[RMDB]
This 177-nucleotide RNA was probed chemically with DMS and 2A3. 2A3 is a SHAPE reagent: it acylates the 2'-hydroxyl of flexible nucleotides of all four kinds. For 2A3 the reverse transcriptase was SuperScript II with manganese. The DMS profile rests on 52,806 reads. The RNA was probed in 150 mM KOAc, 10 mM MgCl2 and 150 mM bicine (pH 8.5) at 24 C.

RNA sequence: GGGAACGACUCGAGUAGAGUCGAAAACGGAGUACUAUCACCAUCGUGCAUUAUCGAUGUGUGAUGCAGGUAAUGCACUAGGAUGGUUGUACAUCACACAGAAUUAUCCGAUGGUGAUGGUAUUCAGGCUUCACGAAGUUUUCGAACUUUGUGGAGCAAAAGAAACAACAACAACAAC
Reactivity to DMS in 0.01 (KOAc 150mM, MgCl2 10mM, bicine 150mM(pH8.5), 24C), signal-to-noise 9, nucleotides 027 to 126: c100g010g000a000g010u000a000c000u000a020u000c000a010c010c000a010u000c020g020u030g010c110a010u010u010a010u010c090g010a210u010g010u000g000u010g000a040u040g020c150a110g010g020u020a040a030u010g010c030a040c060u020a110g010g010a070u010g000g010u010u010g010u000a150c070a040u010c110a030c060a040c080a070g000a150a050u010u010a020u000c010c010g000a020u000g000g000u000g000a010u000g000g010u000a000u000u000c000a090g010
Reactivity to 2A3 in 0.01 (KOAc 150mM, MgCl2 10mM, bicine 150mM(pH8.5), 24C), signal-to-noise 9, nucleotides 027 to 126: c050g060g000a000g000u000a000c000u000a000u000c000a000c010c000a000u010c030g050u070g060c050a010u020u030a020u070c130g160a200u080g020u030g040u090g050a040u080g000c010a010g030g070u130a080a030u110g030c010a020c060u100a080g100g040a090u050g090g060u040u050g020u020a040c000a050u060c010a020c000a000c000a020g120a120a040u060u030a010u040c000c010g000a000u000g000g000u000g000a000u000g000g000u000a000u000u000c000a000g050